[RMDB]
An RNA of 177 nucleotides, treated with DMS and 2A3 and read out base by base.
As a SHAPE reagent, 2A3 marks flexible, mostly unpaired nucleotides at the ribose 2'-OH.
For 2A3 the reverse transcriptase was SuperScript II with manganese.
The RNA was probed in 150 mM KOAc, 10 mM MgCl2 and 150 mM bicine (pH 8.5) at 24 C.
Reactivities are rounded to 0.1 and cut off at 0 and 3.
The data come from the RNA Mapping Database (RMDB), library M2PK90.

RNA sequence: GGGAACGACUCGAGUAGAGUCGAAAAGAAAAGAGCCGCAAGCGCAGAUAUGCGCAAUACCGUAACCGCGGCACGGUACUCCGGCAAGCCAUCUAAGAGAGCCGGUGAUAGAUGGCAUACAAAAAAACAGCAUAUAAACGUUCGCGUUUAUAUGCUGAAAAGAAACAACAACAACAAC
Reactivity to DMS in 0.01 (KOAc 150mM, MgCl2 10mM, bicine 150mM(pH8.5), 24C), signal-to-noise 1, nucleotides 027 to 126: g000a110a030a130a150g010a240g060c000c020g050c040a080a140g040c010g010c000a000g000a160u010a060u000g030c010g020c000a160a080u000a040c010c020g000u000a090a020c090c090g050c010g000g070c010a040c000g000g000u010a030c140u000c040c000g010g040c060a110a120g000c000c000a020u010c000u010a090a120g000a300g000a300g000c010c000g010g020u010g010a040u000a030g020a000u000g000g000c000a200u000a010c130a000a020a100a080a030a050a130
Reactivity to 2A3 in 0.01 (KOAc 150mM, MgCl2 10mM, bicine 150mM(pH8.5), 24C), signal-to-noise 1, nucleotides 027 to 126: g030a000a200a010a010g060a060g040c040c060g000c170a270a090g000c000g000c040a010g080a280u250a100u300g010c000g000c030a010a010u010a010c020c000g030u010a070a020c040c030g000c010g030g000c010a000c000g000g000u000a050c030u000c020c020g000g090c060a040a040g040c010c000a020u000c010u110a140a060g090a020g070a040g160c050c010g040g050u040g010a030u050a030g020a010u010g000g000c040a040u180a060c130a000a150a050a040a000a000a030